[RMDB]
RNA sequence: GGGAACGACUCGAGUAGAGUCGAAAAACGAUGGCGGUCACCGAUGCCCUUGCCCAUGGUCAGCGGGCGGUCUUGUGCGCAUCGACCGGAAAUACCUCGGCGUCGGCGGCGGCCUAUGCCGCCCGGGACGUAACCAGAAGUUCGCUUCUGGUUACGUAAAAGAAACAACAACAACAAC
Reactivity to 2A3 in 0.01 (KOAc 150mM, MgCl2 10mM, bicine 150mM(pH8.5), 24C), signal-to-noise 4, nucleotides 027 to 126: a000c080g040a090u110g160g080c070g070g020u030c030a010c050c030g020a020u050g000c000c000c000u040u110g020c020c020c020a100u110g040g020u090c030a010g040c040g010g020g020c060g020g060u090c110u180u200g020u080g060c030g000c040a070u080c090g020a040c020c000g040g020a040a130a020u180a040c030c020u040c020g010g000c010g050u040c010g010g010c010g000g030c050g060g030c000c000u040a060u140g080c030c050g060c000c000c000g000g020g010
Reactivity to DMS in 0.01 (KOAc 150mM, MgCl2 10mM, bicine 150mM(pH8.5), 24C), signal-to-noise 4, nucleotides 027 to 126: a180c070g000a090u000g020g000c030g020g020u000c030a060c050c090g010a040u000g010c030c010c060u000u010g010c080c030c050a110u010g010g020u000c070a100g020c070g000g000g020c020g010g010u010c100u010u010g020u000g010c050g000c040a060u000c070g010a070c010c010g000g000a080a070a100u000a150c070c040u000c130g000g000c050g020u000c050g010g020c050g020g020c020g010g000c020c080u000a040u010g030c020c020g010c010c010c010g020g000g010